[RMDB]
The data come from the RNA Mapping Database (RMDB), library OK3TST. An RNA of 207 nucleotides, treated with 2A3 and DMS and read out base by base. Values cover nucleotides 27 to 156. As a SHAPE reagent, 2A3 marks flexible, mostly unpaired nucleotides at the ribose 2'-OH. The DMS profile rests on 1,451 reads. For DMS the reverse transcriptase was MarathonRT.
RNA sequence: GGGAACGACUCGAGUAGAGUCGAAAAAAAGCGUGGUAAUCAUUUGUGAUUACUGCAAUGCAGAAGUUGAACGACCAACAAUGCGAGAGUCACUUGAAGCUUUGGCUUUCCAUCAGCAGUACGUCCAAUGUAUUAAGAAUUACUGAUGGCACGACCAUGUUAAGAACCGGUUCGCCGGUUCUUAACAAAAAGAAACAACAACAACAAC
Reactivity to 2A3 in 0.01 (KOAc 150mM, MgCl2 10mM, bicine 150mM(pH8.5), 24C), signal-to-noise 2, nucleotides 027 to 156: a000a000a000g110c090g000u010g000g020u020a010a020u030c050a100u020u150u300g230u140g050a000u000u030a010c000u000g000c030a070a000u100g010c020a010g090a160a060g000u090u060g020a140a050c000g050a010c120c020a050a030c030a040a130u030g020c050g010a030g010a000g090u110c000a000c110u090u110g110a110a030g000c000u120u090u130g020g000c000u080u020u010c010c000a030u010c000a010g030c020a000g010u070a000c010g050u070c060c060a130a040u150g010u030a090u120u110a130a030g060a080a090u150u110a050c020u050g010a020u030g000g000c020a000c070g050a040c010c020a020
Reactivity to DMS in 0.01 (KOAc 150mM, MgCl2 10mM, bicine 150mM(pH8.5), 24C), signal-to-noise 1, nucleotides 027 to 156: a010a010a000g060c060g020u020g030g050u010a000a030u000c000a200u000u000u000g000u000g040a020u010u000a000c000u040g030c070a090a040u000g030c040a090g000a080a300g020u010u000g000a180a130c040g010a120c010c040a160a080c080a090a040u000g000c050g060a070g000a060g030u000c060a040c140u010u000g010a050a150g010c030u000u010u000g030g000c000u000u000u000c000c000a040u010c000a020g000c090a100g000u000a040c050g010u020c050c030a100a070u050g040u000a220u010u000a050a090g040a190a090u000u000a030c000u000g000a040u000g020g020c300a060c040g010a030c040c020a240